Description: This 177-nucleotide RNA was probed chemically with DMS. The data come from the RNA Mapping Database (RMDB), library RFM100. The DMS profile rests on 2,173 reads.
[RMDB]
RNA sequence: GGGAACGACUCGAGUAGAGUCGAAAAAGUCUGUAACCCUGGAAACGAAUUAUUCGGAGAUAGGGUUUAAUGAUUGGUAGAGCGUCACACCUCUGUGGCGUCUAGUGUGUCCUUGACAAUCCUUGAAAAGGUCCUUUGGAUUCGUCCAAAGGACCUUAAAAGAAACAACAACAACAAC
Reactivity to DMS in 0.01 (KOAc 150mM, MgCl2 10mM, bicine 150mM(pH8.5), 24C), signal-to-noise 2, nucleotides 027 to 126: a030g020u010c010u000g000u000a080a030c000c000c020u020g000g030a280a100a000c000g000a010a070u000u020a190u000u010c000g000g010a020g020a300u130a020g020g020g060u000u000u000a050a080u070g000a010u000u010g000g010u000a040g000a070g010c010g010u000c010a000c000a070c180c300u020c280u010g060u000g000g000c000g010u000c010u000a000g000u020g010u020g000u000c010c070u000u000g070a140c270a090a060u000c060c010u000u000g000a110a050